[RMDB]
RNA sequence: GGGAACGACUCGAGUAGAGUCGAAAACGGGCGCUCCCCUCUGUCCACCUUCGAGGGGGUUCACACCCCCAACCGGCGGGCCGGCUGCUCUUCUUUCCCUUCUCUCGUCUUCCUCGGUCAACCUCUUGCAACACCGAGUUCGCUCGGUGUAAAAGAAACAACAACAACAAC
Reactivity to 2A3 in 0.01 (KOAc 150mM, MgCl2 10mM, bicine 150mM(pH8.5), 24C), signal-to-noise 7, nucleotides 027 to 129: c020g020g010g000c020g010c020u070c000c010c000c020u020c030u020g060u010c010c010a050c020c030u060u080c040g050a140g000g000g010g000g010u080u090c020a040c010a010c020c000c010c000c010a020a030c020c010g020g000c000g010g020g020c010c010g020g000c030u040g000c010u010c000u070u040c000u020u040u050c000c000c000u030u020c030u010c000u010c010g020u000c000u090u050c020c010u010c010g010g000u020c010a040a080c000c010u040c020u050u060g030c050a080
Reactivity to DMS in 0.01 (KOAc 150mM, MgCl2 10mM, bicine 150mM(pH8.5), 24C), signal-to-noise 7, nucleotides 027 to 129: c120g030g000g030c050g010c060u000c020c020c010c040u000c060u000g010u030c030c030a080c050c030u000u040c090g020a270g000g030g050g010g030u000u000c200a100c220a190c050c000c010c010c020a020a000c030c040g010g000c080g070g000g000c000c060g000g000c070u010g000c050u010c040u050u010c030u020u010u010c010c000c020u000u000c020u040c040u020c020g040u020c030u010u010c030c020u020c020g050g000u030c080a100a130c020c030u030c030u040u070g000c120a120

An RNA of 170 nucleotides, treated with 2A3 and DMS and read out base by base. The DMS profile rests on 43,132 reads. The reactions ran in a buffer of 150 mM KOAc, 10 mM MgCl2 and 150 mM bicine (pH 8.5), at 24 C. For 2A3, 27,520 sequencing reads were counted. It was measured as part of the RMDB library 15KLIB.